[RMDB]
RNA sequence: GGGAACGACUCGAGUAGAGUCGAAAAAUGAUCUGGCCCGGCCCUACGAUCCUAGGCCCAUAGCGUACUCACGAUCACACGGAUCGAUCGCGGCGCGUGGCCGGCGCUGCGUAGUACGAUCUGAUCCGGGUGAUACAACGUUCGCGUUGUAUCACCCAAAAGAAACAACAACAACAAC
Reactivity to DMS in 0.01 (KOAc 150mM, MgCl2 10mM, bicine 150mM(pH8.5), 24C), signal-to-noise 3, nucleotides 027 to 126: a080u010g010a060u000c030u010g000g020c050c040c070g010g010c040c020c050u000a070c100g010a080u000c030c050u000a110g010g000c010c010c070a120u010a060g010c050g010u000a060c060u010c080a120c130g020a060u010c060a100c110a160c040g000g010a030u000c010g010a050u000c000g020c000g000g010c000g010c010g040u000g020g000c010c030g010g000c060g020c000u000g010c000g010u000a100g020u010a110c040g010a030u000c040u010g010a050u000c070c050
Reactivity to 2A3 in 0.01 (KOAc 150mM, MgCl2 10mM, bicine 150mM(pH8.5), 24C), signal-to-noise 2, nucleotides 027 to 126: a000u070g000a020u040c030u050g040g000c020c010c030g040g000c020c000c000u090a080c080g040a060u070c000c040u060a070g050g060c000c010c010a120u130a050g070c020g060u080a050c030u050c040a070c080g080a060u090c030a020c020a010c170g050g010a030u020c010g010a010u060c010g000c020g030g000c000g000c000g000u030g020g000c010c020g010g010c050g000c010u000g000c020g000u030a070g040u030a040c040g010a020u020c040u120g020a040u030c050c020
The record gives the reactivity of an RNA of 177 nucleotides to DMS and 2A3. The data come from the RNA Mapping Database (RMDB), library OK2TRN. For 2A3 the reverse transcriptase was SuperScript II with manganese. The reactions ran in a buffer of 150 mM KOAc, 10 mM MgCl2 and 150 mM bicine (pH 8.5), at 24 C. DMS adducts were read by reverse transcription with MarathonRT.